[RMDB]
RNA sequence: GGGAACGACUCGAGUAGAGUCGAAAAUCAUUUAUGUAUAUUAGAUGGUUAGCCAAGACCAUCUAGCCGAUGGUUCUGCAUACAACAAAGACUUGGCCCCCGGUGCGUAUACGUAAUGUGCAAGAGGGUCGUGGCGAGGAUUCGUCCUCGCCACGACAAAAGAAACAACAACAACAAC
Reactivity to 2A3 in 0.01 (KOAc 150mM, MgCl2 10mM, bicine 150mM(pH8.5), 24C), signal-to-noise 1, nucleotides 027 to 126: u120c030a030u000u050u150a180u070g010u030a120u000a030u220u130a000g000a030u000g000g000u000u050a000g040c000c120a030a030g040a070c000c000a000u000c000u000a030g000c010c020g050a060u050g040g020u070u240c060u240g000c070a040u140a090c020a120a000c030a080a300a030g150a300c080u010u000g000g000c010c000c000c010c000g000g140u070g020c050g000u050a010u000a020c040g030u080a010a010u080g020u090g040c140a090a000g010a050g010g210